[RMDB]
RNA sequence: GGGAACGACUCGAGUAGAGUCGAAAAACUCGGCGGUCGGCAGUGGAGAGGAAUCAAAAACUAGUCCCAGUUGGCAGUGCGACACACACGGAGAGCAGUGGCUGGCUCGGCGUCUCGGCACGGGGAACAUACUUGCGGACUUCGGUCCGCAAGUAUGAAAAGAAACAACAACAACAAC
Reactivity to 2A3 in 0.01 (KOAc 150mM, MgCl2 10mM, bicine 150mM(pH8.5), 24C), signal-to-noise 2, nucleotides 027 to 126: a010c010u020c030g000g010c020g000g010u040c020g020g040c030a040g000u060g040g030a110g000a020g030g040a070a130u150c050a050a090a070a000a010c030u050a030g070u030c010c020c030a040g000u050u010g070g020c030a010g030u070g070c120g020a010c010a010c000a000c030a020c020g090g020a050g020a020g070c050a010g010u040g000g030c060u070g010g010c010u010c030g000g000c010g000u010c020u010c020g010g000c030a010c010g000g020g000g000a040a040
Reactivity to DMS in 0.01 (KOAc 150mM, MgCl2 10mM, bicine 150mM(pH8.5), 24C), signal-to-noise 2, nucleotides 027 to 126: a130c080u020c000g010g030c010g010g040u010c020g000g010c020a080g000u010g010g010a080g050a050g010g000a080a090u030c160a070a060a060a090a040c130u000a080g010u020c000c010c010a100g050u020u000g020g030c020a050g000u000g000c000g000a080c110a100c160a090c060a050c110g030g000a080g000a080g000c070a100g020u010g010g000c100u020g000g000c000u000c010g020g000c010g000u000c040u020c050g000g020c000a050c060g000g000g020g010a030a130

The record gives the reactivity of an RNA of 177 nucleotides to 2A3 and DMS. Values are in units of 0.01, from 0 to 300, in steps of 10. The reactions ran in a buffer of 150 mM KOAc, 10 mM MgCl2 and 150 mM bicine (pH 8.5), at 24 C. The 2A3 profile rests on 1,029 reads. It was measured as part of the RMDB library RFM100.